An RNA of 177 nucleotides, treated with 2A3 and DMS and read out base by base.
[RMDB]
RNA sequence: GGGAACGACUCGAGUAGAGUCGAAAAUAGGUUUAAUUGCUUAUGAAUUGAUCUCGGGAAACCUAGCUCUAGGUAAGGUCAUUUUAUCAUUGAUUCCGGAUAGAGUGAGUAAGAUUUUAGCGAAGGCCCUUUGGUUCAUUUUCGAAUGAACCAAAGGAAAAGAAACAACAACAACAAC
Reactivity to 2A3 in 0.01 (KOAc 150mM, MgCl2 10mM, bicine 150mM(pH8.5), 24C), signal-to-noise 1, nucleotides 027 to 126: u090a050g040g030u020u120u210a060a060u160u070g000c040u070u070a080u200g130a140a070u100u050g010a030u050c000u020c020g040g010g010a060a010a060c030c000u000a030g010c080u010c040u070a030g070g000u040a030a000g150g020u010c010a110u020u160u040u120a110u080c010a010u000u160g080a100u300u150c020c040g030g010a030u010a060g050a040g000u040g040a040g070u030a050a000g100a090u050u060u090u060a030g030c030g000a060a000g040g000c000
Reactivity to DMS in 0.01 (KOAc 150mM, MgCl2 10mM, bicine 150mM(pH8.5), 24C), signal-to-noise 2, nucleotides 027 to 126: u000a040g020g010u000u000u010a110a140u000u010g010c010u000u000a040u020g000a090a130u000u020g020a100u000c010u000c080g050g010g020a060a090a100c020c030u000a190g010c030u000c060u010a040g000g030u010a110a080g000g010u010c010a020u000u000u010u000a050u000c060a040u000u000g000a090u010u020c070c050g000g010a050u010a010g000a010g010u000g000a100g020u020a080a110g000a100u000u000u010u000a050g000c050g030a040a170g000g030c170
Background: DMS adducts were read by reverse transcription with MarathonRT. 2A3 adducts were read by reverse transcription with SuperScript II with manganese. The RNA was probed in 150 mM KOAc, 10 mM MgCl2 and 150 mM bicine (pH 8.5) at 24 C. Source: RMDB library OK2TRN, as collected in RNAgym.